[RMDB]
RNA sequence: GGGAACGACUCGAGUAGAGUCGAAAAUGACCACUUAUACAUUUGGUGUAUACAAUAUAUACAUAUUACGUCUGGUAUAAGUUAAGCCUAACGGACAGGCGGGUCGGUUGCCGGAUAAGAAAUAAAACGAGUUGUAGGACUUCGGUCCUGCGACUCGAAAAGAAACAACAACAACAAC
Reactivity to 2A3 in 0.01 (KOAc 150mM, MgCl2 10mM, bicine 150mM(pH8.5), 24C), signal-to-noise 4, nucleotides 027 to 126: u150g010a010c000c010a000c010u010u000a000u000a000c000a080u050u060u160g000g000u010g000u000a010u010a020c090a170a020u070a020u020a000u020a110c010a030u090a070u060u090a050c030g020u000c050u050g040g000u000a000u000a000a000g000u010u080a030a020g000c000c000u020a060a020c020g010g040a020c010a000g010g000c000g000g000g000u000c000g000g030u030u080g000c000c000g000g000a010u030a020a050g120a040a070a030u130a020a070a010a010
Reactivity to DMS in 0.01 (KOAc 150mM, MgCl2 10mM, bicine 150mM(pH8.5), 24C), signal-to-noise 4, nucleotides 027 to 126: u030g000a020c010c000a090c000u000u000a000u000a000c010a030u020u020u000g010g020u000g000u000a030u000a050c160a100a090u050a300u010a050u010a060c060a050u010a060u020u020a100c080g000u020c050u010g000g010u000a000u000a000a000g000u000u060a080a090g000c010c000u000a070a180c040g000g000a010c040a080g010g000c000g000g010g000u000c000g000g000u000u020g000c030c000g000g000a170u000a070a090g000a070a050a050u020a040a060a110a120
An RNA of 177 nucleotides, treated with 2A3 and DMS and read out base by base. Reactivities are given for positions 27 through 126. The RNA was probed in 150 mM KOAc, 10 mM MgCl2 and 150 mM bicine (pH 8.5) at 24 C. For 2A3, 6,656 sequencing reads were counted. 2A3 adducts were read by reverse transcription with SuperScript II with manganese.